[RMDB]
RNA sequence: GGGAACGACUCGAGUAGAGUCGAAAAUGCCUUGUAUCGUCUGAUGGACAACCUGGCGGUGAUGCUAUUAGUUUGAGUUUUAAUAACCUUUUAGGGUUUGAUUCUAGUAAACCAGUCACUAAGAAAUAUACAGUGUUCUUCGGAACACUGAAAAGAAACAACAACAACAAC
Reactivity to DMS in 0.01 (KOAc 150mM, MgCl2 10mM, bicine 150mM(pH8.5), 24C), signal-to-noise 6, nucleotides 027 to 129: u030g040c030c020u000u000g050u040a000u040c090g010u030c030u020g020a080u000g020g070a100c020a120a170c090c040u020g000g000c080g030g030u020g030a080u000g030c020u040a070u030u020a000g000u030u040u020g030a130g040u040u000u010u030a020a070u000a060a000c040c000u010u020u020u020a000g000g000g000u050u000u020g010a090u020u050c050u000a020g000u030a040a100a090c080c090a070g000u040c060a040c040u040a050a080g020a040a080a090u030a140u050a160
Reactivity to 2A3 in 0.01 (KOAc 150mM, MgCl2 10mM, bicine 150mM(pH8.5), 24C), signal-to-noise 5, nucleotides 027 to 129: u090g030c000c000u030u010g100u060a110u060c070g030u010c030u070g180a130u160g110g010a020c010a080a110c020c030u020g010g000c030g000g000u010g010a030u080g000c020u040a000u030u030a080g120u050u050u120g030a010g000u040u070u020u040a160a120u070a010a020c010c000u020u130u100u190a180g010g000g000u020u000u000g030a020u020u050c020u010a040g020u080a100a030a040c010c020a010g040u030c010a000c020u020a080a010g090a100a100a000u150a030u010a010
Description
Source: RMDB library 15KLIB, as collected in RNAgym. This 170-nucleotide RNA was probed chemically with DMS and 2A3. The RNA was probed in 150 mM KOAc, 10 mM MgCl2 and 150 mM bicine (pH 8.5) at 24 C. For 2A3 the reverse transcriptase was SuperScript II with manganese. The DMS profile rests on 23,827 reads.